[RMDB]
Record summary:
Structure probing data (2A3 and DMS) for a 207-nucleotide construct. The 2A3 profile rests on 2,464 reads. In probing experiments dimethyl sulfate is read out at A N1 and C N3, which are open when not base-paired. For DMS, 3,206 sequencing reads were counted. It was measured as part of the RMDB library M2RFPK. The RNA was probed in 150 mM KOAc, 10 mM MgCl2 and 150 mM bicine (pH 8.5) at 24 C. For 2A3 the reverse transcriptase was SuperScript II with manganese.
RNA sequence: GGGAACGACUCGAGUAGAGUCGAAAAGAGCGAUUAGACAAAGGGGUAGAGCUACAUAUUAGAUAGCUGUAUAAGCGUUCAAGUUACAUCAAAACAUCUUCAAUAUUUAUUACUUACUUUCCUUUCUGCCAGAGUACGGUAUUCGUACCGUACUCAAAGUGAUGUAUAGCUUCGGCUAUACAUCACUAAAAGAAACAACAACAACAAC
Reactivity to 2A3 in 0.01 (KOAc 150mM, MgCl2 10mM, bicine 150mM(pH8.5), 24C), signal-to-noise 5, nucleotides 027 to 156: g030a000g010c020g040a080u050u130a040g020a060c070a020a050a020g000g020g010g010u020a020g040a010g070c010u050a030c040a060u250a100u130u080a070g120a180u080a020g010c010u020g020u090a090u020a180a040g030c020g020u030u050c040a030a000g010u050u090a060c030a100u160c040a050a080a060a100c010a040u040c040u190u040c070a090a070u040a140u170u150u100a130u100u090a030c030u060u030a020c010u060u100u120c020c000u020u090u090c020u040g070c030c030a030g000a000g000u000a000c000g010g000u000a020u020u030c040g020u020a000c000c000g000u000a010c000u000c000a010a000
Reactivity to DMS in 0.01 (KOAc 150mM, MgCl2 10mM, bicine 150mM(pH8.5), 24C), signal-to-noise 2, nucleotides 027 to 156: g000a030g030c020g010a110u000u010a110g000a110c050a030a080a080g000g000g020g040u020a060g010a060g040c040u000a060c080a100u000a160u020u010a170g020a140u000a050g040c050u000g020u000a130u000a070a060g020c050g020u000u000c070a060a080g020u000u000a060c100a090u020c040a050a100a090a070c030a110u000c050u000u020c050a040a080u000a090u020u000u000a070u000u000a080c030u000u000a050c060u000u000u000c010c020u000u000u000c040u000g010c070c050a180g020a020g030u000a000c000g000g000u000a060u000u010c300g060u000a010c010c000g030u000a000c000u000c000a010a000